[RMDB]
RNA sequence: GGGAACGACUCGAGUAGAGUCGAAAAGAUGCGGGAGUGGCUGCGCCUCCCAAAGGGAGUGUGCUUGAACGGCUCUAUCAGGCCACUGCGUCGCAAUUGGAGGAUCCUGAUUUCGCCUUUCAAUUACGGCCAUUUAUCGCUUCGGCGAUAAAUGGCCAAAAGAAACAACAACAACAAC
Reactivity to 2A3 in 0.01 (KOAc 150mM, MgCl2 10mM, bicine 150mM(pH8.5), 24C), signal-to-noise 1, nucleotides 027 to 126: g080a030u180g000c000g000g090g000a130g000u070g080g000c000u000g000c040g000c000c010u000c000c000c000a170a170a000g100g000g000a040g010u300g020u020g010c000u000u090g040a060a000c040g050g000c000u010c020u040a300u020c000a000g120g000c010c020a000c030u000g050c000g060u150c070g000c000a020a020u010u050g130g000a020g070g000a000u130c000c010u110g070a070u000u000u280c050g030c000c000u090u070u000c020a050a060u050u000a080c130